This 177-nucleotide RNA was probed chemically with 2A3 and DMS. Values are in units of 0.01, from 0 to 300, in steps of 10.
RNA sequence: GGGAACGACUCGAGUAGAGUCGAAAAGCUGGUCCGUAGCGAGGCCCCGCUGGUGGGCACCGGGAUGGAGCUGCGCGCGGCGAUCGACGCCGGCGACGUCGUCGUCGCCGAAGAAAGCGGCGUCAUCGUUAGUGUUAACAUUCGUGUUAACACUAACAAAAGAAACAACAACAACAAC
Reactivity to 2A3 in 0.01 (KOAc 150mM, MgCl2 10mM, bicine 150mM(pH8.5), 24C), signal-to-noise 6, nucleotides 027 to 126: g020c020u040g030g050u040c020c020g050u070a030g070c020g030a090g070g000c000c000c020c030g060c140u170g080g070u160g070g040g000c060a040c020c020g060g040g010a020u040g010g010a030g010c000u020g000c030g000c010g000c000g020g000c010g010a050u080c080g010a020c010g010c020c010g030g000c040g020a050c010g040u100c020g020u040c000g000u000c010g000c000c010g010a020a020g040a030a090a000g030c020g010g000c010g070u030c010a050u060c030
Reactivity to DMS in 0.01 (KOAc 150mM, MgCl2 10mM, bicine 150mM(pH8.5), 24C), signal-to-noise 8, nucleotides 027 to 126: g010c040u000g010g010u000c010c030g010u000a070g010c040g000a150g010g010c030c010c020c030g010c130u010g020g020u010g020g010g010c050a060c040c040g000g000g000a040u000g000g010a090g010c010u000g000c030g010c120g010c010g000g000c010g000a030u010c040g010a030c010g010c060c010g010g000c260g010a150c010g010u000c060g000u000c010g010u000c000g010c020c010g000a040a070g000a050a100a170g010c010g010g010c010g010u000c030a040u000c060
Reactivities are given for positions 27 through 126.